RNA sequence: GGGAACGACUCGAGUAGAGUCGAAAAAGGAUACAAGUCUCCUUACCGGAAGGUGUACGUUUAUAUUUUUUAUGUUCCAUGAUUAUCGAUGCUGACCUUCUUUAUCCAGCAAAUCGUCCAACCCGGACAAGAAACACGUAUCCAAGGCGAGGGUAUGAGUGUUGUACAUUUUCGAAUGUACAACACUAAAAGAAACAACAACAACAAC
Reactivity to DMS in 0.01 (KOAc 150mM, MgCl2 10mM, bicine 150mM(pH8.5), 24C), signal-to-noise 3, nucleotides 027 to 156: a060g000g000a110u020a120c050a100a220g010u000c030u000c010c030u000u000a110c040c040g040g000a110a070g000g000u010g030u000a040c050g000u000u000u010a040u000a020u030u000u000u000u000u000a070u020g020u000u020c080c030a150u010g000a100u000u000a090u000c090g020a090u000g040c020u000g010a060c070c030u010u000c040u000u010u010a120u010c010c010a070g030c030a070a070a090u010c030g000u000c060c040a060a100c040c020c030g030g010a070c070a040a070g000a100a030a060c020a060c100g000u000a020u000c000c020a050a140g020g000c040g000a080g000g020g020u000a090u000g010
Reactivity to 2A3 in 0.01 (KOAc 150mM, MgCl2 10mM, bicine 150mM(pH8.5), 24C), signal-to-noise 6, nucleotides 027 to 156: a010g060g000a050u100a090c100a120a110g080u020c040u000c050c010u030u040a060c020c030g050g040a050a040g040g030u040g040u080a030c040g010u000u160u020a140u020a140u070u090u060u010u040u070a140u150g070u080u050c020c020a010u080g040a150u110u160a040u240c100g030a030u090g000c020u030g030a090c020c050u100u090c000u040u190u090a080u070c050c000a000g000c020a020a100a100u070c030g010u010c020c010a040a050c060c030c040g000g010a040c030a030a020g050a020a090a000c070a000c040g020u020a010u010c010c020a020a040g050g010c060g040a040g010g010g020u080a080u170g090
This 207-nucleotide RNA was probed chemically with DMS and 2A3. 2A3 adducts were read by reverse transcription with SuperScript II with manganese. Source: RMDB library OK3TST, as collected in RNAgym. The reactions ran in a buffer of 150 mM KOAc, 10 mM MgCl2 and 150 mM bicine (pH 8.5), at 24 C.